[RMDB]
RNA sequence: GGGAACGACUCGAGUAGAGUCGAAAAGCGCUGUGGCGUUGCCUGAGGCGCUUGUCUGUGCGAGGUAUUUCUCCGACCAGUGGCACGCCCUGACCCAGCGACUAGACGCCUGGGCCACCAAUGUGCACCCUUCAGAAGUCUUCGGACUUCUGAAGGGAAAAGAAACAACAACAACAAC
Reactivity to DMS in 0.01 (KOAc 150mM, MgCl2 10mM, bicine 150mM(pH8.5), 24C), signal-to-noise 2, nucleotides 027 to 126: g000c000g030c000u020g030u010g020g030c020g030u040u020g030c010c010u000g000a160g020g000c000g020c010u000u000g000u000c080u000g000u010g030c030g030a090g000g000u010a130u000u000u000c020u010c020c040g010a100c050c050a070g000u000g020g010c020a070c080g010c050c050c030u010g000a020c020c010c010a050g010c050g010a130c160u000a130g000a210c120g010c180c020u000g010g010g010c010c020a010c130c110a060a160u020g000u010g030c050a170
Reactivity to 2A3 in 0.01 (KOAc 150mM, MgCl2 10mM, bicine 150mM(pH8.5), 24C), signal-to-noise 1, nucleotides 027 to 126: g000c080g000c000u000g090u090g130g040c100g220u160u300g000c000c010u200g170a110g060g000c040g020c000u010u010g010u040c030u080g090u040g000c100g060a040g020g010u110a270u080u220u090c030u000c060c000g040a080c030c000a050g090u070g210g000c010a010c090g000c000c000c000u130g020a060c010c010c030a000g010c030g050a060c040u110a070g060a300c040g030c030c010u030g000g010g000c010c000a040c010c030a150a090u100g030u060g060c000a050